[RMDB]
RNA sequence: GGGAACGACUCGAGUAGAGUCGAAAAAGUCUACUUCGGUAGACUAAAAAGAUAUGGAUCUUCUCCCCACCGACCAGAACUACUCCUGGUAAUCGGAAACGAUUACAGGAGCUGGUCGAGGAAGAUCCUAAGUCAAAAAGACUCCUUCGGGAGUCAAUCUACUAGUAACCUUCGGGUUACUAGUAGAAAAAGAAACAACAACAACAAC
Reactivity to 2A3 in 0.01 (KOAc 150mM, MgCl2 10mM, bicine 150mM(pH8.5), 24C), signal-to-noise 2, nucleotides 027 to 156: a000g000u000c000u000a020c010u040u060c210g150g000u000a000g000a010c000u030a010a010a180a010a000g080a060u170a060u190g000g000a000u010c010u000u020c010u170c040c000c000c000a040c000c000g000a000c000c000a000g010a050a030c070u260a060c010u300c030c010u100g250g000u030a000a000u000c000g000g060a070a080a090c000g010a000u000u000a000c010a000g000g000a000g000c000u000g000g000u000c000g000a010g000g000a000a000g000a000u060c000c000u010a050a010g030u050c030a070a060a010a040a080g270a000c000u300c300c000u020u050c180g000g020g000a000g000u000c000a000a140